[RMDB]
RNA sequence: GGGAACGACUCGAGUAGAGUCGAAAAGACCUUCAGUUCGCUGAAGGUCGAUGAUGGUAAGAGAGAUUACCAUCUGUUAAGUGAUAUGGUUAAGAUCUCUCAGUGAACGUGCUUUCGAGCACGUUAACCUAGGUCGAUAAUUCGUUAUCGACCUAGGAAAAGAAACAACAACAACAAC
Reactivity to DMS in 0.01 (KOAc 150mM, MgCl2 10mM, bicine 150mM(pH8.5), 24C), signal-to-noise 6, nucleotides 027 to 126: g000a010c010c000u000u000c000a000g010u000u010c250g030c010u000g010a010a010g010g020u000c000g000a030u010g000a050u000g000g010u000a040a150g000a020g000a010g010a030u000u000a030c000c000a010u000c030u000g000u010u010a090a130g010u010g000a090u010a070u000g010g010u010u000a070a080g010a020u000c000u000c000u000c010a210g010u000g000a030a010c000g010u000g010c000u000u010u000c190g010a030g010c000a010c000g000u000u000a030a100
Reactivity to 2A3 in 0.01 (KOAc 150mM, MgCl2 10mM, bicine 150mM(pH8.5), 24C), signal-to-noise 7, nucleotides 027 to 126: g000a000c000c000u000u000c010a030g000u020u120c170g020c110u000g000a000a000g010g000u000c000g000a000u020g010a010u010g020g090u090a180a030g000a010g000a000g000a010u010u030a010c010c000a000u000c030u030g160u120u190a200a110g090u070g180a090u090a060u300g200g050u140u150a080a020g020a070u010c010u000c000u000c020a010g050u060g190a010a000c000g000u000g010c000u040u100u150c230g040a010g000c000a000c000g000u010u010a000a000